RNA sequence: GGGAACGACUCGAGUAGAGUCGAAAAUCAUCAGUUCGCUGAUGAGCUAAGGGGUCAAACCGAGGGACAUGCUCCUACUGAAGCCUCCACGGUAGUGAGCAACAGCCUCCCCACCGGUUUGACGGAGGCACCCAGAACUACGAUAUUCGUAUCGUAACCCAUAGGAAGACUUCGGUCUUCCUAUGGGAAAAGAAACAACAACAACAAC
Reactivity to 2A3 in 0.01 (KOAc 150mM, MgCl2 10mM, bicine 150mM(pH8.5), 24C), signal-to-noise 3, nucleotides 027 to 156: u010c000a010u000c020a000g030u070u150c180g090c140u000g000a010u000g010a040g000c020u130a160a160g170g030g080g000u000c000a020a000a000c000c000g000a120g000g010g020a060c090a120u060g000c000u000c000c000u020a000c000u020g030a070a030g000c010c000u000c000c020a020c040g000g000u010a020g030u070g300a000g090c000a020a000c090a030g260c010c100u130c000c000c000c000a060c020c020g000g010u020u000u000g000a000c000g000g000a010g010g000c000a040c010c010c010a030g080a100a080c100u080a000c020g000a000u020a010u050u120c230g050u070a000u030c020g000u020a050a060
Reactivity to DMS in 0.01 (KOAc 150mM, MgCl2 10mM, bicine 150mM(pH8.5), 24C), signal-to-noise 1, nucleotides 027 to 156: u000c010a010u000c000a020g010u010u000c300g050c000u030g000a000u000g000a080g020c050u010a120a150g000g030g050g010u040c020a020a000a000c010c010g060a100g000g030g000a140c300a170u000g030c060u000c020c020u000a080c010u000g020a060a060g010c010c010u010c000c040a300c110g080g010u010a000g030u000g010a080g030c000a070a220c130a210g010c060c080u000c020c010c000c000a090c040c000g040g000u000u030u010g000a010c050g000g010a010g120g130c000a170c040c000c000a300g000a090a140c020u050a070c000g000a040u000a070u000u000c200g000u010a000u000c000g030u000a000a280